An RNA of 207 nucleotides, treated with DMS and 2A3 and read out base by base.
The 2A3 profile rests on 3,716 reads.
For DMS, 1,504 sequencing reads were counted.

RNA sequence: GGGAACGACUCGAGUAGAGUCGAAAAAGAAGAUUUCUGAGACAAACACGCUUCACAAUGUGCGGCAAAGAAACAUUGUUUAUGCAAAGGCACUUCGCAAUGUGUGCUCAAACAUUGCUUAUUCAAAAAAAGAUUUUAGACUUCGGUCUAAAAUCAACGUCUUUCAUUAGUUCGCUAAUGAAAGACGAAAAGAAACAACAACAACAAC
Reactivity to DMS in 0.01 (KOAc 150mM, MgCl2 10mM, bicine 150mM(pH8.5), 24C), signal-to-noise 1, nucleotides 027 to 156: a080g000a060a190g010a240u000u000u020c050u010g000a250g000a110c080a180a090a170c130a040c010g000c000u000u010c050a090c050a040a020u000g100u010g000c000g010g010c050a140a100a120g140a050a040a060c020a000u000u000g030u010u000u000a130u000g010c080a050a140a180g000g020c020a000c040u000u000c110g050c080a140a090u000g010u000g000u000g000c040u010c030a080a120a060c010a030u000u000g000c010u000u000a070u010u010c050a020a010a040a070a070a130a160g010a010u000u010u010u010a010g010a010c000u000u000c300g000g000u000c000u000a010a000a000a000u000c010a030a090
Reactivity to 2A3 in 0.01 (KOAc 150mM, MgCl2 10mM, bicine 150mM(pH8.5), 24C), signal-to-noise 4, nucleotides 027 to 156: a000g060a030a010g050a070u080u190u070c040u140g140a110g040a100c100a030a180a020c050a010c030g000c000u010u010c000a000c010a010a010u010g010u010g010c000g030g040c080a110a060a070g090a010a060a010c010a020u000u000g080u020u120u130a120u120g060c050a050a060a060g140g000c000a000c000u020u010c030g000c010a000a010u010g020u000g040u010g010c110u090c190a030a030a000c000a010u000u000g000c000u060u060a150u100u160c100a060a100a010a000a000a000a030g010a010u000u000u000u010a010g010a000c010u010u050c300g050g000u000c000u010a000a000a000a000u000c000a000a000